[RMDB]
The record gives the reactivity of an RNA of 207 nucleotides to DMS. The DMS profile rests on 1,502 reads. For DMS the reverse transcriptase was MarathonRT.

RNA sequence: GGGAACGACUCGAGUAGAGUCGAAAAGCAUGCGUAAGUGCUUGAUAUUUGCCAGGAAGCGCGCGAACGUGAAAGCUCCUAGAGCACCGCGGGCAGGACGUGGCGUAGACCUUCGAAAACUAUACCGGUCUAACAUUCUGGUGACGAGUGCAACGUGUGUGAUUCAUAACUUCGGUUAUGAAUCACAAAAAGAAACAACAACAACAAC
Reactivity to DMS in 0.01 (KOAc 150mM, MgCl2 10mM, bicine 150mM(pH8.5), 24C), signal-to-noise 1, nucleotides 027 to 156: g020c100a060u000g000c030g040u000a060a060g030u000g020c010u010u000g020a140u000a140u000u000u010g000c090c000a150g020g000a100a220g020c010g010c040g070c000g010a100a030c100g030u020g040a080a160a250g080c040u000c000c100u000a110g050a300g060c000a290c080c040g000c060g000g000g050c080a140g000g010a080c000g010u000g010g020c000g040u010a020g000a080c050c030u010u010c060g000a150a170a070a050c040u000a090u030a050c000c050g010g000u000c040u000a150a080c020a120u000u000c010u020g020g000u000g000a160c040g010a030g020u000g000c010a160a040c060g000u020g020